[RMDB]
RNA sequence: GGGAACGACUCGAGUAGAGUCGAAAAUUUAUUGGACUGCCGUGAUAAUCUUGGCAAGAAAACUUCAGAGUGUUCACCCGGGUGGAGGCAACUCAGAUUACACCGCAUCCCUAGACGAGAACAUCUCAAUCCGCUCUGUAUUCGUACAGAGCGGAUUAAAAGAAACAACAACAACAAC
Reactivity to 2A3 in 0.01 (KOAc 150mM, MgCl2 10mM, bicine 150mM(pH8.5), 24C), signal-to-noise 2, nucleotides 027 to 126: u070u050u050a120u060u090g050g050a020c020u000g000c000c020g040u020g060a160u050a170a070u050c010u170u150g070g030c040a050a000g080a010a070a000a010c010u060u030c040a080g020a060g050u060g160u050u060c020a090c020c060c000g050g050g010u040g010g020a070g000g030c060a070a010c000u020c030a000g030a050u050u020a020c060a000c000c020g010c060a040u020c000c000c000u070a020g040a030c060g000a010g000a020a030c010a200u040c000u020c010
Reactivity to DMS in 0.01 (KOAc 150mM, MgCl2 10mM, bicine 150mM(pH8.5), 24C), signal-to-noise 2, nucleotides 027 to 126: u020u000u040a010u050u000g000g080a110c080u000g020c030c080g030u030g030a100u000a080a130u020c030u000u030g000g000c110a060a160g010a110a050a050a080c080u000u000c050a060g050a060g000u040g010u000u020c030a130c060c020c070g000g010g030u000g000g030a090g000g000c130a080a090c080u020c070a230g010a020u000u000a080c070a010c050c140g000c070a050u000c000c000c040u090a040g000a080c050g010a090g000a000a050c160a040u010c000u020c070

Conditions: 150 mM KOAc, 10 mM MgCl2 and 150 mM bicine (pH 8.5), 24 C. Structure probing data (2A3 and DMS) for a 177-nucleotide construct.